[RMDB]
RNA sequence: GGGAACGACUCGAGUAGAGUCGAAAACGAUGAGGGGAGAAGAGAAGUGGACAGGUGGGUCGAAGACGCCCGCCCCAAGGCGUACGCCCGUCGCCUGUUUGCAUGCGGGGGUCAGACCCCCUUACCGAGCAUCGUAAUCAUUCGUGAUUACGAUGCUAAAAGAAACAACAACAACAAC
Reactivity to 2A3 in 0.01 (KOAc 150mM, MgCl2 10mM, bicine 150mM(pH8.5), 24C), signal-to-noise 2, nucleotides 027 to 126: c060g050a090u090g020a080g040g030g040g010a040g030a130a000g060a020g010a110a040g100u090g030g040a050c050a080g010g050u170g090g110g000u000c030g060a120a050g000a000c070g230c040c000c000g000c000c000c030c000a020a000g000g040c010g010u000a030c070g060c010c040c020g040u010c000g000c000c010u040g060u090u200u130g040c070a070u150g000c020g020g000g010g010g010u030c010a010g020a010c020c000c000c010c000u020u000a050c010c010g000
Reactivity to DMS in 0.01 (KOAc 150mM, MgCl2 10mM, bicine 150mM(pH8.5), 24C), signal-to-noise 3, nucleotides 027 to 126: c090g020a050u000g010a100g000g020g010g000a070g010a090a070g000a100g000a110a090g020u000g000g020a110c190a020g010g030u010g020g010g020u000c020g000a120a120g000a030c020g000c010c000c010g020c010c120c180c080a060a030g000g000c000g000u010a060c090g020c100c120c110g000u010c060g010c000c010u000g000u000u010u000g020c170a080u010g010c030g000g020g000g000g000u000c010a120g000a150c010c000c000c000c010u000u000a090c050c100g010